[RMDB]
Notes
Structure probing data (2A3 and DMS) for a 177-nucleotide construct. High DMS reactivity at an A or C suggests that its Watson-Crick edge is free. The data come from the RNA Mapping Database (RMDB), libraries RFM100 and RFMREP. 2A3 adducts were read by reverse transcription with SuperScript II with manganese. For DMS the reverse transcriptase was MarathonRT.

RNA sequence: GGGAACGACUCGAGUAGAGUCGAAAAGUGAAAUGAUGAUUCUGUUUAUCCAUUCGCUGAGUACGCUGCUCUGACCUUCUUCCCAGUCUCGGUUCCUGUUCUGGGAGCUUGGGGCUGAGUAGCCACCGACUCAUUAAGCGUUCGCGCUUAAUGAGUCAAAAGAAACAACAACAACAAC
Reactivity to 2A3 in 0.01 (KOAc 150mM, MgCl2 10mM, bicine 150mM(pH8.5), 24C), signal-to-noise 9, nucleotides 027 to 126: g040u040g060a050a040a070u050g060a040u030g020a030u150u090c090u140g170u100u110u090a020u020c020c020a020u010u010c010g000c020u010g010a010g070u050a040c070g000c020u020g010c000u000c010u040g250a300c000c010u110u120c010u050u030c020c010c010a010g020u010c020u010c060g070g010u040u020c010c010u060g090u180u110c040u080g000g010g000a010g010c020u100u280g010g000g000g000c010u000g000a000g010u020a000g000c000c010a020c000c040
Reactivity to DMS in 0.01 (KOAc 150mM, MgCl2 10mM, bicine 150mM(pH8.5), 24C), signal-to-noise 3, nucleotides 027 to 126: g020u010g020a070a050a070u020g000a090u010g010a030u000u040c130u020g000u010u010u010a020u010c010c100a140u010u000c030g010c000u000g000a160g020u010a090c220g020c010u000g000c010u000c010u000g000a090c040c030u010u000c120u020u000c010c000c000a010g030u010c030u000c080g000g010u000u010c010c010u010g000u010u010c100u020g010g000g010a010g010c210u010u030g040g000g000g000c000u000g000a020g020u000a020g010c010c100a100c120c060